[RMDB]
RNA sequence: GGGAACGACUCGAGUAGAGUCGAAAAAAUAAUUGGCGAAACUCGUUACGCGUUGGCUGCCUAAUUCAAGGAAUUAGCGUGCCUUCAUGCUAAGGGUUUGAUAUCUGCUAAAACCCGGUGCAUUCAUAAGACUUUUGCUUGUUCGCAAGCAAAAGAACCGUACCUUAUUCUUCGGAAUAAGGUACGGAAAAGAAACAACAACAACAAC
Reactivity to 2A3 in 0.01 (KOAc 150mM, MgCl2 10mM, bicine 150mM(pH8.5), 24C), signal-to-noise 2, nucleotides 027 to 156: a000a000u220a020a040u080u060g040g000c010g010a060a060a030c090u060c030g100u110u030a030c060g040c030g000u040u040g000g000c060u080g080c040c000u010a000a000u040u000c160a180a230g150g040a110a010u010u030a010g060c080g050u060g000c000c000u030u080c060a080u070g020c010u000a040a100g030g020g000u030u020u020g030a010u010a160u090c180u200g010c010u030a000a090a110a080c000c000c030g000g040u040g050c040a100u000u270c050a050u090a300a050g030a130c000u030u010u000u000g110c000u000u020g020u030u030c110g000c080a000a000g030c000a010a020a000a000g010a010a000
This 207-nucleotide RNA was probed chemically with 2A3.
For 2A3, 550 sequencing reads were counted.
2A3 adducts were read by reverse transcription with SuperScript II with manganese.
The data come from the RNA Mapping Database (RMDB), library M2RFPK.
2A3 is a SHAPE reagent: it acylates the 2'-hydroxyl of flexible nucleotides of all four kinds.